RNA sequence: GGGAACGACUCGAGUAGAGUCGAAAAGAACGUUGGAAGGCGCUUCCGUGAAAGCGGAAUUCUUUCAUACCAAGAACGGGAAAACCGGAAGGAGUUGGCGGACGGAUGUGGCCGAGGUAUGAGGAAAGGGAUUAUCAAUCUUCGGAUUGAUAAUCCCAAAAGAAACAACAACAACAAC
Reactivity to DMS in 0.01 (KOAc 150mM, MgCl2 10mM, bicine 150mM(pH8.5), 24C), signal-to-noise 1, nucleotides 027 to 126: g000a090a100c180g000u000u000g030g000a020a050g000g030c100g010c120u000u000c010c010g000u000g020a080a090a140g010c000g000g070a040a000u000u030c010u000u000u010c030a060u000a010c070c180a070a120g000a040a030c030g000g000g000a080a020a120a090c040c060g000g000a110a230g000g000a210g000u000u000g000g000c040g000g010a160c020g000g010a060u110g030u050g000g020c000c030g000a030g000g000u000a010u000g010a010g080g000a110a060a100
Reactivity to 2A3 in 0.01 (KOAc 150mM, MgCl2 10mM, bicine 150mM(pH8.5), 24C), signal-to-noise 2, nucleotides 027 to 126: g120a140a030c070g030u040u020g100g000a050a050g030g000c010g000c040u050u040c010c030g050u000g040a090a030a030g080c020g020g000a020a010u020u000c020u000u100u020c000a060u070a070c030c000a090a030g160a090a040c060g000g000g000a020a060a030a270c010c010g000g030a000a020g100g070a080g080u150u170g160g040c000g040g010a020c010g000g040a080u060g040u020g180g030c000c000g000a020g020g000u040a030u110g040a030g020g030a080a060a020
The record gives the reactivity of an RNA of 177 nucleotides to DMS and 2A3. The RNA was probed in 150 mM KOAc, 10 mM MgCl2 and 150 mM bicine (pH 8.5) at 24 C. DMS (dimethyl sulfate) methylates the pairing face of unpaired adenines and cytosines. For 2A3 the reverse transcriptase was SuperScript II with manganese. The 2A3 profile rests on 850 reads. It was measured as part of the RMDB library OK1LIB. For DMS, 1,466 sequencing reads were counted.